[RMDB]
RNA sequence: GGGAACGACUCGAGUAGAGUCGAAAAGCUUAUGCACUGCCUUUUCUGAUGGCGCUCACGGCGGUGGUCCUAUACCAAACGGUAACUGGGACAAACGCGCCGGAGCCGGCAGCGAGCGAGCCCAUCAAGCGGAUAAUUUAUUCGUAAAUUAUCCGCUAAAAGAAACAACAACAACAAC
Reactivity to DMS in 0.01 (KOAc 150mM, MgCl2 10mM, bicine 150mM(pH8.5), 24C), signal-to-noise 3, nucleotides 027 to 126: g000c020u010u000a070u020g030c080a130c030u000g020c010c010u010u000u000u010c200u000g000a100u010g030g010c120g010c010u000c010a160c020g020g020c010g000g020u000g020g020u000c000c000u000a070u010a000c000c000a090a120a170c270g010g010u000a010a050c200u000g010g000g010a000c000a010a070a060c030g020c010g030c000c010g020g010a010g030c010c070g000g000c000a010g000c020g000a060g020c020g000a080g010c040c010c010a090u000c160a120
Reactivity to 2A3 in 0.01 (KOAc 150mM, MgCl2 10mM, bicine 150mM(pH8.5), 24C), signal-to-noise 4, nucleotides 027 to 126: g020c020u100u050a050u290g040c080a060c130u010g010c000c000u090u170u220u230c110u220g150a190u180g110g050c120g000c060u020c020a200c010g030g000c010g030g000u030g000g000u000c000c000u030a040u040a050c000c000a210a300a090c140g010g000u010a050a060c090u110g020g010g020a010c020a030a280a000c090g040c000g000c020c010g010g000a000g000c000c020g000g000c010a000g000c000g000a000g010c000g010a030g040c020c020c020a050u120c080a040